[RMDB]
The data come from the RNA Mapping Database (RMDB), library RNAMAK. This 207-nucleotide RNA was probed chemically with 2A3 and DMS. For 2A3, 4,340 sequencing reads were counted. For DMS the reverse transcriptase was MarathonRT.
RNA sequence: GGGAACGACUCGAGUAGAGUCGAAAAGCCAAAGCACUUCGGUGCUUUGGCAAAAACCGUAGGCUGCAGUACAGCAAUGACGUAAGUUCGAAAGAGCUUAUAAGACAGCUGACUGACAGCCUAAACGGAAAAACGUUAAGCCUUCGGGCUUAACGAACAUAUCCACCUUGUUCGCAAGGUGGAUAUGAAAAGAAACAACAACAACAAC
Reactivity to 2A3 in 0.01 (KOAc 150mM, MgCl2 10mM, bicine 150mM(pH8.5), 24C), signal-to-noise 4, nucleotides 027 to 156: g000c000c010a000a010a010g030c010a010c020u050u160c300g080g000u020g020c050u000u020u010g030g020c000a000a000a000a000a000c000c000g000u010a010g000g000c010u020g010c000a010g020u080a300c010a010g020c070a110a250u090g000a010c030g010u000a000a000g010u010u010c010g030a090a080a040g000a010g000c010u020u000a010u020a070a050g060a010c040a060g140c010u010g000a010c000u000g040a100c000a000g000c000c000u000a000a000a000c000g010g030a160a070a000a000a000c010g000u000u000a000a010g010c020c000u070u110c260g060g000g000c000u000u000a000a000c000g000a000a000
Reactivity to DMS in 0.01 (KOAc 150mM, MgCl2 10mM, bicine 150mM(pH8.5), 24C), signal-to-noise 2, nucleotides 027 to 156: g060c000c000a000a040a020g000c030a010c010u000u000c300g080g030u000g020c000u000u020u020g000g010c000a000a010a030a040a040c010c000g000u000a050g010g020c000u000g050c010a010g020u000a170c010a020g040c010a150a080u000g000a200c110g000u000a010a030g010u000u000c000g020a230a160a300g000a010g020c000u000u010a010u000a060a180g020a250c040a070g010c000u000g000a140c010u000g000a140c000a010g010c010c000u000a000a020a060c020g010g000a050a080a030a090a120c020g000u000u010a000a020g000c000c000u010u020c300g050g030g020c000u000u000a000a000c000g010a020a160